[RMDB]
RNA sequence: GGGAACGACUCGAGUAGAGUCGAAAAUUUGUGGAGAGAGUGUGUGUCACUCACAGGACAUAUGACGCAUUUGCAACAUGCGUUCUCAAAGUGGGAGCCACAGCAGUGUUCGUUUUACUAUUGCUGGCGACUGAUCAUAAUUCGUUAUGAUCAGUCGAAAAGAAACAACAACAACAAC
Reactivity to DMS in 0.01 (KOAc 150mM, MgCl2 10mM, bicine 150mM(pH8.5), 24C), signal-to-noise 8, nucleotides 027 to 126: u000u000u000g020u000g020g010a120g010a080g010a060g010u000g020u010g020u010g020u000c030a090c030u000c070a080c120a150g000g000a060c060a040u000a050u010g010a070c040g000c010a040u000u000u010g020c240a080a110c300a010u000g010c020g020u000u000c050u000c060a070a090a090g010u010g000g010g000a160g020c060c070a060c030a030g010c050a020g000u000g010u000u000c280g000u000u010u010u000a080c070u010a060u000u000g010c030u000g000g020
Reactivity to 2A3 in 0.01 (KOAc 150mM, MgCl2 10mM, bicine 150mM(pH8.5), 24C), signal-to-noise 5, nucleotides 027 to 126: u080u060u080g060u040g060g020a020g020a020g010a050g050u040g000u030g010u060g060u110c020a020c080u020c000a030c040a030g080g020a020c010a050u110a050u160g020a020c000g000c010a000u060u060u290g050c030a050a030c010a060u030g020c000g000u070u000c050u000c030a130a120a020g070u100g010g040g010a020g020c010c020a030c010a010g010c000a010g020u010g050u090u060c090g020u060u070u070u130a060c080u050a050u100u090g060c040u010g030g060